The record gives the reactivity of an RNA of 177 nucleotides to DMS and 2A3. For DMS the reverse transcriptase was MarathonRT. Values cover nucleotides 27 to 126. The data come from the RNA Mapping Database (RMDB), library RFM100.

RNA sequence: GGGAACGACUCGAGUAGAGUCGAAAAGUCCCGCGAGGGACAAGGGUAGUACCCUUGGCAACUGCACAGAAAACUUACCCCUAAAUAUUCAAUGAGGAUUUGAUUCGACUCUUACCUUGGCGACAAGCAUAGUAGGCGACUUCGGUCGCCUACUAUGAAAAGAAACAACAACAACAAC
Reactivity to DMS in 0.01 (KOAc 150mM, MgCl2 10mM, bicine 150mM(pH8.5), 24C), signal-to-noise 2, nucleotides 027 to 126: g010u010c010c020c070g000c140g000a280g000g000g060a000c040a050a090g000g030g000u020a050g000u020a300c000c010c000u000u000g000g000c000a230a040c080u040g030c050a090c200a130g000a090a040a120a060c030u000u010a010c100c000c000c000u050a020a040a080u020a080u000u000c070a050a050u040g000a120g000g020a070u000u000u000g000a020u020u000c040g020a040c010u020c030u000u020a000c010c000u000u030g000g000c110g010a120c200a040a100g020
Reactivity to 2A3 in 0.01 (KOAc 150mM, MgCl2 10mM, bicine 150mM(pH8.5), 24C), signal-to-noise 4, nucleotides 027 to 126: g000u010c010c000c010g000c040g010a030g040g020g000a010c030a020a020g030g000g000u080a100g010u230a160c010c010c000u000u010g030g020c040a090a090c040u110g020c050a060c030a060g150a040a110a010a020c060u120u120a130c010c010c000c000u080a070a160a020u160a080u140u120c120a080a070u170g030a080g090g030a060u090u070u080g070a070u090u010c010g000a020c040u000c000u000u030a050c030c010u000u010g020g000c020g040a090c040a090a000g060